[RMDB]
RNA sequence: GGGAACGACUCGAGUAGAGUCGAAAAGCUGUGUCCCAUGUGGGUCAAUAGGUGGCAGAGAGGAGAAAGGCUAUGUCUUCGGUCUGUGUUCUGACCUAGGAACAUCUGAAUGAUUAGUAACCUAACACCAUAGCUGUUUGUUCGCAAACAGCUAUGGAAAAGAAACAACAACAACAAC
Reactivity to DMS in 0.01 (KOAc 150mM, MgCl2 10mM, bicine 150mM(pH8.5), 24C), signal-to-noise 2, nucleotides 027 to 126: g030c080u000g020u000g010u000c010c020c020a120u000g030u000g010g000g020u010c050a090a070u010a090g010g010u010g010g020c020a070g000a120g020a170g010g020a060g010a060a050a090g010g010c070u010a060u000g000u000c010u000u020c050g030g000u030c070u000g010u000g010u000u010c030u000g010a090c090c090u010a130g000g000a070a030c050a070u020c030u000g010a050a040u020g010a070u000u000a080g000u010a090a150c040c000u000a090a110c210a230
Reactivity to 2A3 in 0.01 (KOAc 150mM, MgCl2 10mM, bicine 150mM(pH8.5), 24C), signal-to-noise 2, nucleotides 027 to 126: g030c070u050g000u000g060u150c000c060c000a000u170g110u050g020g010g000u020c000a050a140u030a180g110g020u080g110g000c010a000g030a000g000a040g120g020a020g050a040a040a040g080g000c050u040a040u150g060u000c000u000u010c010g070g040u000c050u010g040u000g030u100u070c060u060g110a120c010c030u000a020g040g000a030a010c000a010u030c020u120g070a160a060u050g030a110u100u040a010g050u050a070a040c010c000u020a050a020c040a020

Chemical mapping of a 177-nucleotide RNA with DMS and 2A3.
For DMS the reverse transcriptase was MarathonRT.
The 2A3 profile rests on 1,329 reads.